The data come from the RNA Mapping Database (RMDB), library ARCHII. Chemical mapping of a 207-nucleotide RNA with 2A3. Conditions: 150 mM KOAc, 10 mM MgCl2 and 150 mM bicine (pH 8.5), 24 C. The 2A3 profile rests on 1,134 reads.
[RMDB]
RNA sequence: GGGAACGACUCGAGUAGAGUCGAAAAGUCCGUGCUCGCAGCGUAGAGUCAUCAUCACGGAACCGCUGAGACGUGGCUGUCUGCCCACACUUGGUUAAAUCUAGCAGACUGGUUUCCGGGUGCGCUUUGCCUGUCGUGCUGCCCGGCGACGAGACCUCAAUUCCGAAAUCUUCGGAUUUCGGAAUUGAAAAGAAACAACAACAACAAC
Reactivity to 2A3 in 0.01 (KOAc 150mM, MgCl2 10mM, bicine 150mM(pH8.5), 24C), signal-to-noise 1, nucleotides 027 to 156: g050u030c000c020g010u010g040c000u030c040g120c080a150g020c110g100u220a050g040a010g130u030c020a160u100c010a010u030c010a030c060g000g060a040a040c020c010g010c060u030g030a000g060a150c070g000u000g000g020c030u050g000u040c020u040g020c000c060c000a000c000a000c000u060u100g000g070u070u190a010a060a140u120c050u080a030g020c020a010g050a060c010u020g060g000u010u070u020c000c000g000g000g020u000g000c010g010c000u100u080u080g030c020c050u070g050u150c030g020u010g010c020u010g020c000c000c000g010g000c000g020a010c010g010a000g010a040c050c020u000